[RMDB]
RNA sequence: GGGAACGACUCGAGUAGAGUCGAAAAGUCAGGGAGUGAGUCCCCUGAUGUCAUCCGAGGAUAUGAGGCAUCGCUAAAUCUGGCCAUCCCCUGAAGCACCCAGCCUCACCGACUUCCUGAAGCGUGGAUGAACGCUGCUGCCACAAAUGUGCUGUGAGCAUUUAUAAAAUUUCGAUUUUAUAAAUGCAAAAGAAACAACAACAACAAC
Reactivity to 2A3 in 0.01 (KOAc 150mM, MgCl2 10mM, bicine 150mM(pH8.5), 24C), signal-to-noise 2, nucleotides 027 to 156: g040u000c000a000g020g030g010a070g040u150g050a040g090u130c010c010c000c020u000g020a030u030g070u030c040a090u000c030c020g050a130g020g020a050u060a100u300g050a040g020g000c000a050u060c040g000c130u140a110a100a050u070c110u120g070g000c060c010a080u080c040c000c000c020u050g020a040a000g030c000a040c030c030c010a010g020c000c010u010c010a020c010c020g030a040c020u060u040c000c010u060g030a090a000g040c030g050u030g010g080a100u070g050a040a000c030g000c000u010g010c010u000g000c030c000a040c000a040a180a060u130g020u040g010c010u030g010u030g060a010
Reactivity to DMS in 0.01 (KOAc 150mM, MgCl2 10mM, bicine 150mM(pH8.5), 24C), signal-to-noise 2, nucleotides 027 to 156: g020u000c020a010g010g050g020a070g000u010g010a240g000u010c060c000c020c020u000g010a040u000g010u010c040a110u000c040c030g010a110g180g000a200u010a110u000g010a080g010g000c000a070u010c050g010c120u000a020a050a150u030c060u000g000g000c000c010a100u000c020c000c010c040u010g010a110a160g040c010a090c020c000c030a110g050c030c000u000c010a050c060c040g010a090c050u000u000c020c010u010g030a050a070g000c040g050u000g020g010a100u000g010a070a090c020g000c010u000g030c010u020g000c010c030a130c070a070a090a110u010g010u000g020c000u010g020u000g000a180